Chemical mapping of a 177-nucleotide RNA with 2A3 and DMS. Values cover nucleotides 27 to 126. For DMS, 899 sequencing reads were counted. The RNA was probed in 150 mM KOAc, 10 mM MgCl2 and 150 mM bicine (pH 8.5) at 24 C. The data come from the RNA Mapping Database (RMDB), library TTRDEL.

RNA sequence: GGGAACGACUCGAGUAGAGUCGAAAAGAUAUGGAUGACCACGAUACUACCCACCCAAAUGCUCGGAAACGAGCACUUGGAGGUAUUAUCAAUCCUAAGUCAAAACCUACCGAUUCGUCGGUAGGAACUUUUUUUACCACUUCGGUGGUAAAAAAAGAAAAGAAACAACAACAACAAC
Reactivity to 2A3 in 0.01 (KOAc 150mM, MgCl2 10mM, bicine 150mM(pH8.5), 24C), signal-to-noise 1, nucleotides 027 to 126: g000a040u080a120u280g030g020a020u010g100a130c130c080a070c290g000a020u000a010c000u000a000c030c010c020a190c100c040c010a020a010a020u000g000c000u000c020g000g000a040a100a080c010g020a000g000c020a010c000u000u020g020g010a010g000g010u000a000u000u000a000u010c030a020a000u050c000c030u020a210a080g090u080c020a010a080a050a200c000c000u000a000c010c000g030a020u070u070c280g020u000c020g230g020u010a000g000g000a000a000
Reactivity to DMS in 0.01 (KOAc 150mM, MgCl2 10mM, bicine 150mM(pH8.5), 24C), signal-to-noise 2, nucleotides 027 to 126: g000a040u000a240u000g010g010a010u000g000a130c150c150a200c220g020a010u000a000c110u000a000c000c010c040a270c200c010c000a010a020a010u000g000c000u010c000g000g020a090a100a190c000g010a010g020c000a020c040u000u000g000g030a060g030g000u000a000u000u000a000u000c000a210a060u000c000c000u010a040a120g000u010c030a160a070a110a140c000c000u000a000c000c000g030a020u000u000c210g010u000c010g000g010u000a000g010g000a010a010